Structure probing data (DMS and 2A3) for a 177-nucleotide construct.
DMS adducts were read by reverse transcription with MarathonRT.
Source: RMDB library TTRDES, as collected in RNAgym.
[RMDB]
RNA sequence: GGGAACGACUCGAGUAGAGUCGAAAAAAGAUAUGGACGCAGGGCCUCUUGGAUUUACUUGACGAAUAGCCAUCGGAAACGAUGGCUAAAUGUGUCAAGUUGUCAGAGGCCUGCGUCCUAAGUCAAACGUUAUCUAAUGGUUCGCCAUUAGAUAACGAAAAGAAACAACAACAACAAC
Reactivity to DMS in 0.01 (KOAc 150mM, MgCl2 10mM, bicine 150mM(pH8.5), 24C), signal-to-noise 5, nucleotides 027 to 126: a110a090g010a040u010a300u010g000g000a010c000g010c010a020g020g030g010c010c000u000c000u010u010g030g010a020u010u000u000a000c000u000u010g000a010c000g010a290a150u000a010g010c000c000a010u000c000g000g000a150a100a200c000g010a010u000g000g010c000u000a000a010a020u010g040u010g010u000c000a010a000g000u000u000g010u000c010a040g010a010g000g010c000c000u000g000c000g010u000c000c000u000a000a060g000u000c040a110a110a250
Reactivity to 2A3 in 0.01 (KOAc 150mM, MgCl2 10mM, bicine 150mM(pH8.5), 24C), signal-to-noise 3, nucleotides 027 to 126: a010a010g090a040u100a050u150g010g000a000c000g020c030a050g170g210g300c030c010u030c040u140u270g230g010a120u240u280u250a050c020u010u010g000a000c010g050a160a130u020a050g000c000c010a000u000c000g030g040a030a100a020c000g010a000u020g000g000c000u000a010a000a010u020g110u010g000u010c000a000a020g010u000u000g010u000c020a010g000a000g000g020c000c000u000g000c010g000u000c000c000u000a000a000g010u020c010a000a040a060

For 2A3 the reverse transcriptase was SuperScript II with manganese.